RNA sequence: GGGAACGACUCGAGUAGAGUCGAAAAGUCUCACGAGUGCAAAGACAAAGGUAGUUGACUCCGGUGCUACCAGUACUCGAAUGAAUGCGAAAGAGUUCAAGUAUUCCAACCGGAGAAGAACUCAAAAAGUAGUAUGCCAUUUCGAUGGCAUACUACUAAAAGAAACAACAACAACAAC
Reactivity to 2A3 in 0.01 (KOAc 150mM, MgCl2 10mM, bicine 150mM(pH8.5), 24C), signal-to-noise 4, nucleotides 027 to 126: g060u000c000u000c010a030c010g000a000g010u040g030c020a040a270a140g070a180c100a080a130a010g020g000u000a000g010u000u040g060a080c010u000c020c000g000g000u000g010c000u000a000c000c020a010g010u010a000c000u000c020g000a030a030u110g080a020a000u130g070c120g060a050a100a070g000a110g000u000u010c040a120a010g070u040a160u220u080c110c000a040a010c000c020g000g010a000g000a000a010g000a010a000c000u000c000a000a030a040a030
Reactivity to DMS in 0.01 (KOAc 150mM, MgCl2 10mM, bicine 150mM(pH8.5), 24C), signal-to-noise 3, nucleotides 027 to 126: g060u000c000u010c010a300c000g020a070g010u000g000c000a080a120a190g010a100c300a110a180a090g000g020u040a000g020u000u000g000a090c000u000c010c020g000g040u000g010c010u000a000c000c020a160g050u000a020c010u000c020g040a070a060u080g000a240a030u010g000c010g020a080a110a080g030a040g000u000u000c000a060a220g000u000a020u010u000c190c150a070a130c020c000g000g000a050g000a110a100g000a000a000c010u000c000a070a080a090a090
An RNA of 177 nucleotides, treated with 2A3 and DMS and read out base by base. The data come from the RNA Mapping Database (RMDB), library OK1LIB. Conditions: 150 mM KOAc, 10 mM MgCl2 and 150 mM bicine (pH 8.5), 24 C. For DMS, 2,944 sequencing reads were counted.